Chemical mapping of a 177-nucleotide RNA with DMS.
Conditions: 150 mM KOAc, 10 mM MgCl2 and 150 mM bicine (pH 8.5), 24 C.
DMS adducts were read by reverse transcription with MarathonRT.

[RMDB]
RNA sequence: GGGAACGACUCGAGUAGAGUCGAAAAUGGGGUGUCAUUGCCAUGUCUAGUUUUUGUUAGGGACAGUCUGGUGGAACUCUGUUCAAUACAAAGAAUGGUUGUGAGGAAUAUCUAAUACAGAUGGAAGACGACUUACACGGUUCGCCGUGUAAGUCGUAAAAGAAACAACAACAACAAC
Reactivity to DMS in 0.01 (KOAc 150mM, MgCl2 10mM, bicine 150mM(pH8.5), 24C), signal-to-noise 1, nucleotides 027 to 126: u010g040g000g010g000u000g000u000c050a120u000u010g020c000c020a070u000g000u000c090u010a110g020u000u000u000u000u000g020u010u010a090g000g010g000a010c070a040g010u000c030u000g010g050u000g000g000a060a060c040u000c050u000g010u000u000c060a040a080u000a070c120a060a040a070g000a140a060u010g010g010u000u010g030u000g000a060g000g000a030a060u000a060u000c010u000a070a130u000a200c090a040g000a020u000g010g000a080a190g000